[RMDB]
This 177-nucleotide RNA was probed chemically with 2A3 and DMS. Reactivities are given for positions 27 through 126. It was measured as part of the RMDB library OK2TST. Conditions: 150 mM KOAc, 10 mM MgCl2 and 150 mM bicine (pH 8.5), 24 C.

RNA sequence: GGGAACGACUCGAGUAGAGUCGAAAACAAUGUGUUACGCGGUGCGCAUGGCAUUCAACAGUCUAUUUCAUUGCUAUGGGGCGAUCGCUACCUGUAUUGAUAUAGGGGGAAAUGUUCAGCAACAUAGCCUCUACUACACCUUCGGGUGUAGUAGAGGAAAAGAAACAACAACAACAAC
Reactivity to 2A3 in 0.01 (KOAc 150mM, MgCl2 10mM, bicine 150mM(pH8.5), 24C), signal-to-noise 2, nucleotides 027 to 126: c020a000a090u140g020u010g040u170u130a060c100g030c030g070g160u110g110c080g000c020a040u080g030g030c000a040u070u050c060a110a100c040a110g110u000c030u110a230u020u160u060c060a070u060u100g000c000u030a050u070g020g000g100g030c010g070a060u060c060g010c020u020a050c000c000u090g080u040a070u040u160g120a100u050a020u060a300g020g000g000g050g010a000a010a030u070g020u030u030c030a030g020c010a020a030c000a010u030a030g010
Reactivity to DMS in 0.01 (KOAc 150mM, MgCl2 10mM, bicine 150mM(pH8.5), 24C), signal-to-noise 2, nucleotides 027 to 126: c090a110a080u000g030u010g010u000u010a040c120g010c050g000g020u010g000c060g000c040a070u000g010g000c050a050u000u000c120a090a050c190a110g000u000c080u000a060u000u010u000c070a060u000u010g000c000u000a040u000g000g010g030g020c020g010a040u000c090g010c020u000a110c030c010u000g000u000a060u000u010g010a110u000a090u000a060g020g000g000g010g020a050a140a070u000g010u000u000c050a050g010c080a030a020c020a050u000a070g000